Structure probing data (2A3 and DMS) for a 177-nucleotide construct. The DMS profile rests on 1,276 reads. It was measured as part of the RMDB library TTRDES. High DMS reactivity at an A or C suggests that its Watson-Crick edge is free.
RNA sequence: GGGAACGACUCGAGUAGAGUCGAAAAAAAAGAUAUGGAAGCGUAAGGAGCUUGGAUUUAUGGAGGUAGUAUGUCGGAAACGACAUAUUUCCUCCAUUGUCAGCUCUAUCGCUUCCUAAGUCAAAAACCAUGAAGAUGUGUUCGCACAUCUUCAUGGAAAAGAAACAACAACAACAAC
Reactivity to 2A3 in 0.01 (KOAc 150mM, MgCl2 10mM, bicine 150mM(pH8.5), 24C), signal-to-noise 1, nucleotides 027 to 126: a000a010a000a010g070a050u120a010u130g010g000a000a010g000c020g020u110a300a300g100g010a020g000c050u210u240g150g000a040u300u300u190a010u050g000g010a000g020g010u000a010g000u010a010u000g000u000c000g000g000a080a110a040c010g020a000c000a000u000a000u010u020u020c010c000u040c000c000a000u010u000g000u000c000a000g000c000u010c000u000a000u000c000g000c010u000u050c000c000u000a000a000g000u000c020a000a000a030a090a290
Reactivity to DMS in 0.01 (KOAc 150mM, MgCl2 10mM, bicine 150mM(pH8.5), 24C), signal-to-noise 1, nucleotides 027 to 126: a030a080a120a100g000a030u000a300u010g010g000a010a000g000c000g010u000a160a300g020g010a000g010c010u000u010g000g010a020u000u000u010a010u000g010g020a050g000g000u010a030g000u000a010u010g000u000c020g010g000a150a090a130c000g010a010c000a000u010a000u010u010u000c010c000u010c000c000a000u000u000g000u000c020a050g000c020u000c010u000a170u010c010g010c010u000u000c000c000u000a010a080g020u010c030a080a110a080a100a140